Annotation:
Chemical mapping of a 177-nucleotide RNA with DMS and 2A3.
[RMDB]
RNA sequence: GGGAACGACUCGAGUAGAGUCGAAAAUAAAACAGUGCGUGGUAGCACAAACCAGACCAAUGAUAAGUGCAUGGUCGCACAAGUACAGCUUCGCCUGUACAAAGCGAACAACAACAACAACAAAAAACAGUAGUUCCUAGUUCGCUAGGAACUACUGAAAAGAAACAACAACAACAAC
Reactivity to DMS in 0.01 (KOAc 150mM, MgCl2 10mM, bicine 150mM(pH8.5), 24C), signal-to-noise 2, nucleotides 027 to 126: u000a030a070a100a070c120a120g000u010g010c000g000u000g060g050u000a100g040c000a020c040a040a070a150c020c000a050g030a160c080c100a020a100u010g000a190u010a060a120g050u000g050c080a080u010g000g010u000c030g010c000a050c120a080a170g000u000a050c010a010g000c040u010u000c200g020c180c000u000g010u010a010c030a030a080a150g000c000g000a020a020c000a060a060c030a050a030c030a010a090c090a000a020c080a000a030a070a020a090a070
Reactivity to 2A3 in 0.01 (KOAc 150mM, MgCl2 10mM, bicine 150mM(pH8.5), 24C), signal-to-noise 2, nucleotides 027 to 126: u130a010a070a060a000c090a050g020u020g030c010g060u090g030g120u100a040g040c000a010c040a040a060a020c010c020a000g110a040c010c030a050a150u090g080a070u090a150a130g070u080g110c070a080u090g110g040u040c000g000c010a060c000a140a070g010u000a010c000a020g000c010u110u140c030g050c040c000u000g030u000a000c000a010a060a000g000c000g030a000a040c000a010a000c000a010a000c010a010a010c010a020a000c060a050a150a000a000a000a000

For 2A3 the reverse transcriptase was SuperScript II with manganese. It was measured as part of the RMDB library M2PK90. Conditions: 150 mM KOAc, 10 mM MgCl2 and 150 mM bicine (pH 8.5), 24 C. For DMS the reverse transcriptase was MarathonRT. In probing experiments dimethyl sulfate is read out at A N1 and C N3, which are open when not base-paired.